Source information:
An RNA of 207 nucleotides, treated with 2A3 and read out base by base. It was measured as part of the RMDB library OK3TST.
RNA sequence: GGGAACGACUCGAGUAGAGUCGAAAACAAGAAUCGUCUCAAACGUAUCAUAUGAUAGCUGUGGGCAGACUGCAAUGACAUUGUCACCACCAACAAAUUGUGCAACACUAUCGUGUUCUGAUCGGAGAUGCUUUCUGAGCGUCAUAGCGGAAUCACGGUGCCACGUUUCGUUCGCGAAACGUGGCACAAAAGAAACAACAACAACAAC
Reactivity to 2A3 in 0.01 (KOAc 150mM, MgCl2 10mM, bicine 150mM(pH8.5), 24C), signal-to-noise 1, nucleotides 027 to 156: c020a000a090g040a060a040u110c030g070u000c040u050c060a050a140a080c030g300u300a120u090c110a060u090a060u300g060a000u030a040g070c160u050g020u030g000g100g000c010a030g100a080c030u000g050c110a150a220u190g010a110c050a210u110u150g000u030c000a070c080c010a020c000c000a000a030c010a040a160a080u140u160g100u120g000c050a020a000c040a090c050u050a050u060c040g010u030g000u100u180c020u080g020a090u050c050g090g010a090g000a020u020g070c020u060u070u090c090u160g050a020g000c020g000u050c010a110u100a110g020c080g040g020a010a040u250c080a040c000g020

The 2A3 profile rests on 410 reads. For 2A3 the reverse transcriptase was SuperScript II with manganese. The reactions ran in a buffer of 150 mM KOAc, 10 mM MgCl2 and 150 mM bicine (pH 8.5), at 24 C.